[RMDB]
RNA sequence: GGGAACGACUCGAGUAGAGUCGAAAACACACGACUGGUGCGGGGAUGGGCCUGUAACCCAUGUAAGUCAAUGAAUAAGACCCAGCUUGGUAGUUAUUAAGAUAUAGGUUGAUUGCUUAAAAUUGUAAGAGUGGAAGAGUAAGAAGGAAAGUCAAAGUCAAUGGGAGAAGUUCGCUUCUCCCAUUGAAAAAGAAACAACAACAACAAC
Reactivity to 2A3 in 0.01 (KOAc 150mM, MgCl2 10mM, bicine 150mM(pH8.5), 24C), signal-to-noise 2, nucleotides 027 to 156: c030a000c020a020c010g050a020c030u060g010g010u090g030c060g000g000g000g040a010u080g000g000g040c020c010u060g080u140a060a040c030c000c000a020u100g060u050a040a010g000u040c100a100a030u050g080a080a090u090a030a030g000a000c010c000c000a000g000c090u050u040g040g010u020a050g080u050u140a070u110u070a070a050g010a030u060a000u080a090g010g070u010u030g020a060u020u050g000c000u020u140a010a090a110a080u020u070g020u060a040a010g020a010g030u050g010g010a010a010g010a010g010u020a010a000g010a000a000g040g010a030a030a010g050u130c050a020a010a000g100
Reactivity to DMS in 0.01 (KOAc 150mM, MgCl2 10mM, bicine 150mM(pH8.5), 24C), signal-to-noise 3, nucleotides 027 to 156: c050a130c040a120c060g010a110c030u000g020g030u010g020c050g020g000g030g000a030u000g000g040g030c000c030u010g000u000a070a060c010c010c030a070u000g000u000a070a110g000u000c060a100a120u010g020a110a120u000a080a160g020a100c020c000c010a080g000c050u010u010g030g040u000a090g000u000u000a080u000u000a060a070g010a110u010a110u000a070g030g020u000u000g010a140u010u000g000c010u000u000a050a090a050a100u010u010g030u010a040a080g030a120g010u000g020g010a050a070g030a110g010u000a050a100g010a040a060g000g010a030a050a080g020u000c030a030a090a120g010